Chemical mapping of a 177-nucleotide RNA with DMS and 2A3. 2A3 adducts were read by reverse transcription with SuperScript II with manganese. The 2A3 profile rests on 4,547 reads.
RNA sequence: GGGAACGACUCGAGUAGAGUCGAAAAGAGAAACCUCAGCGUAGGGGUAACAGCUCUGUUGAGGAGAGCAGUGCAAGUCGUGCCAGUGGUAAGUAGAUUGCCGAGCAUUGUUCGGCGUAGAUUUAGCACUUCGAACCAAAUUCGUUUGGUUCGAAGUAAAAGAAACAACAACAACAAC
Reactivity to DMS in 0.01 (KOAc 150mM, MgCl2 10mM, bicine 150mM(pH8.5), 24C), signal-to-noise 4, nucleotides 027 to 126: g000a160g000a080a070a070c020c000u000c050a050g010c060g010u020a070g040g010g020g000u010a070a120c210a150g000c010u000c030u010g000u010u010g020a040g000g000a080g000a130g010c070a020g000u010g020c070a080a070g010u010c050g010u000g020c040c040a070g020u000g000g020u000a030a050g030u010a050g020a070u010u030g000c000c020g000a030g000c050a160u000u040g000u010u010c000g000g010c040g040u010a030g010a050u000u010u000a030g010c110
Reactivity to 2A3 in 0.01 (KOAc 150mM, MgCl2 10mM, bicine 150mM(pH8.5), 24C), signal-to-noise 6, nucleotides 027 to 126: g090a020g010a020a100a020c010c010u020c000a030g020c090g230u180a070g010g010g000g030u030a040a030c020a040g020c000u000c020u050g020u030u020g040a040g010g090a050g030a000g010c020a020g020u010g030c010a070a070g030u020c030g040u040g040c010c010a050g010u040g070g020u110a080a060g040u040a080g040a220u050u140g000c000c000g010a000g010c120a170u150u300g020u070u010c010g010g000c010g000u010a020g000a050u030u070u140a030g010c030
Annotation
Reactivities are given for positions 27 through 126. In probing experiments dimethyl sulfate is read out at A N1 and C N3, which are open when not base-paired.